Chemical mapping of a 177-nucleotide RNA with DMS and 2A3. 2A3 adducts were read by reverse transcription with SuperScript II with manganese. The DMS profile rests on 2,481 reads. The 2A3 profile rests on 5,120 reads. The reactions ran in a buffer of 150 mM KOAc, 10 mM MgCl2 and 150 mM bicine (pH 8.5), at 24 C. It was measured as part of the RMDB library RFMREP. Reactivities are given for positions 27 through 126. DMS adducts were read by reverse transcription with MarathonRT.

RNA sequence: GGGAACGACUCGAGUAGAGUCGAAAAUUGGGACCGGAAGACCUGAGGGGUACGUCCGGGGUAGGAGUGAAAUCCCGUAAUCCUGGACGGACCACCGGUGGCGAAAGCGCCUCAGGAAGACGGAUCCGAAGUUACUAUGGUUCGCCAUAGUAACUUCAAAAGAAACAACAACAACAAC
Reactivity to DMS in 0.01 (KOAc 150mM, MgCl2 10mM, bicine 150mM(pH8.5), 24C), signal-to-noise 3, nucleotides 027 to 126: u040u010g040g020g010a070c000c010g030g000a130a170g020a150c010c010u020g010a040g000g010g020g020u000a010c030g010u000c000c010g020g010g010g030u000a130g010g010a050g020u010g010a160a120a170u010c000c000c160g010u000a130a060u010c000c010u010g010g000a050c010g000g000a010c010c020a150c180c090g010g000u010g010g010c030g020a070a110a180g010c020g020c000c000u000c030a020g000g020a300a040g010a160c020g000g000a070u000c020c010
Reactivity to 2A3 in 0.01 (KOAc 150mM, MgCl2 10mM, bicine 150mM(pH8.5), 24C), signal-to-noise 2, nucleotides 027 to 126: u130u110g040g000g000a000c010c000g000g020a070a010g050a060c000c010u010g010a010g000g030g000g000u020a000c000g010u000c000c000g000g020g010g000u010a020g020g010a020g010u050g080a040a020a040u020c000c010c000g000u050a020a030u020c000c000u010g000g010a000c000g000g000a000c000c000a060c020c000g030g010u050g020g000c010g050a180a080a010g150c030g020c000c000u000c010a000g010g010a000a010g070a000c010g000g020a120u010c010c040